[RMDB]
This 177-nucleotide RNA was probed chemically with DMS and 2A3. For 2A3 the reverse transcriptase was SuperScript II with manganese.
RNA sequence: GGGAACGACUCGAGUAGAGUCGAAAAUGAAAGAACGUGCAUUCAAAUACGCUAGAAGCACGAAUAGGCGACGCAUAGCGUAAAUCUGAGAAAGCAGAUAACAAAAAUAAAAAGGCGUCGCGAAAAACACGGUAGUAAUAUUCGUAUUACUACCGUGAAAAGAAACAACAACAACAAC
Reactivity to DMS in 0.01 (KOAc 150mM, MgCl2 10mM, bicine 150mM(pH8.5), 24C), signal-to-noise 3, nucleotides 027 to 126: u000g000a140a120a100g010a070a110c020g040u000g010c000a180u000u000c030a030a090a110u000a020c000g010c000u000a190g020a030a050g000c010a000c000g010a140a070u010a090g010g020c000g030a000c000g000c000a040u000a030g000c000g020u000a030a170a040u010c010u000g010a210g000a120a120a110g020c010a000g000a020u010a110a110c110a040a060a080a060a110u020a060a080a070a120a120g000g010c010g020u000c010g010c010g020a020a050a080a100a100
Reactivity to 2A3 in 0.01 (KOAc 150mM, MgCl2 10mM, bicine 150mM(pH8.5), 24C), signal-to-noise 4, nucleotides 027 to 126: u170g040a070a040a070g050a070a010c030g010u010g000c070a250u020u030c010a020a010a100u040a030c010g000c010u000a010g000a040a010g000c000a000c010g020a020a030u120a070g050g010c000g000a000c030g000c020a080u050a040g010c000g010u010a080a040a020u000c010u010g050a070g170a240a140a010g220c000a000g010a020u070a070a030c050a020a110a060a040a050u190a090a120a050a030a010g090g000c000g000u000c000g010c000g010a030a050a010a000a000

Source: RMDB library M2PK90, as collected in RNAgym. For DMS the reverse transcriptase was MarathonRT. The reactions ran in a buffer of 150 mM KOAc, 10 mM MgCl2 and 150 mM bicine (pH 8.5), at 24 C. For DMS, 3,431 sequencing reads were counted.